RNA sequence: GGGAACGACUCGAGUAGAGUCGAAAAGGGCACGCGCAGUUGCGUUACACAUUGUGAAUGCAUCAAUGCUUGUAAAAUGUAGAUAGCAAUACGACCGGUAUAUGCGAAUACACGUACGUUUACGCGGCCCUAGGGCCCGAUUCGUCGGGCCCUAGGGAAAAGAAACAACAACAACAAC
Reactivity to 2A3 in 0.01 (KOAc 150mM, MgCl2 10mM, bicine 150mM(pH8.5), 24C), signal-to-noise 1, nucleotides 027 to 126: g090g000g000c070a080c170g050c000g000c010a020g000u130u020g010c020g000u010u050a020c030a020c040a070u070u070g050u020g090a290a010u250g040c090a050u020c000a030a060u060g000c020u060u070g040u050a040a090a070a080u070g010u020a050g060a300u150a010g000c020a000a000u000a050c070g220a300c040c100g130g030u030a080u050a060u040g000c000g030a030a010u050a010c000a000c020g000u010a000c000g010u000u000u090a040c050g000c000g040g040
Reactivity to DMS in 0.01 (KOAc 150mM, MgCl2 10mM, bicine 150mM(pH8.5), 24C), signal-to-noise 2, nucleotides 027 to 126: g000g000g010c020a080c030g020c000g000c070a090g020u010u010g020c050g010u000u000a030c030a080c000a050u010u000g020u000g010a160a150u010g040c100a040u010c010a030a020u000g020c100u000u010g010u000a040a060a140a110u000g020u000a030g000a080u000a240g030c020a020a030u000a040c030g010a150c190c210g010g010u010a020u000a060u000g000c010g010a100a110u000a020c050a070c030g020u000a000c030g020u000u020u000a030c040g020c030g010g010
Chemical mapping of a 177-nucleotide RNA with 2A3 and DMS. Reactivities are given for positions 27 through 126. Source: RMDB library OK2TRN, as collected in RNAgym. For DMS the reverse transcriptase was MarathonRT. Conditions: 150 mM KOAc, 10 mM MgCl2 and 150 mM bicine (pH 8.5), 24 C. The DMS profile rests on 1,599 reads.